[RMDB]
RNA sequence: GGGAACGACUCGAGUAGAGUCGAAAACAUGUACGCUGCAAACACGAGGGUGCGACAUUCUCCCCUGAGGCGAAAGUCUCUCACACGCCGGGUGCCGAUAAUCAGAUAAGUUGGUGUUGCGGAACCCUCUUGGGAGGCUCUUCGGGGCUUCUCAAGAAAAAGAAACAACAACAACAAC
Reactivity to 2A3 in 0.01 (KOAc 150mM, MgCl2 10mM, bicine 150mM(pH8.5), 24C), signal-to-noise 4, nucleotides 027 to 126: c060a020u080g030u100a030c040g010c030u070g040c040a070a160a050c040a040c080g040a050g020g060g020u080g040c030g050a020c010a040u130u040c040u080c020c000c010c040u090g020a050g030g030c030g050a060a050a040g020u010c010u020c000u020c000a030c000a020c090g050c010c010g040g000g030u040g010c030c010g060a090u120a100a070u090c030a050g090a200u080a290a060g040u010u030g000g020u050g010u020u000g000c000g000g020a050a060c010c010c000
Reactivity to DMS in 0.01 (KOAc 150mM, MgCl2 10mM, bicine 150mM(pH8.5), 24C), signal-to-noise 6, nucleotides 027 to 126: c110a060u010g010u010a030c070g020c020u010g020c030a080a110a110c140a100c110g000a060g000g010g010u010g010c010g010a080c060a040u010u010c050u000c010c010c010c130u020g000a060g000g020c020g000a130a140a130g010u010c020u010c020u000c130a080c090a080c060g000c040c020g000g000g010u010g000c020c010g010a060u020a070a060u020c090a090g010a130u030a050a140g000u010u010g000g010u000g010u000u000g000c010g000g000a080a010c020c020c020

An RNA of 177 nucleotides, treated with 2A3 and DMS and read out base by base. For 2A3 the reverse transcriptase was SuperScript II with manganese. For DMS the reverse transcriptase was MarathonRT. It was measured as part of the RMDB library OK1LIB. The DMS profile rests on 14,666 reads.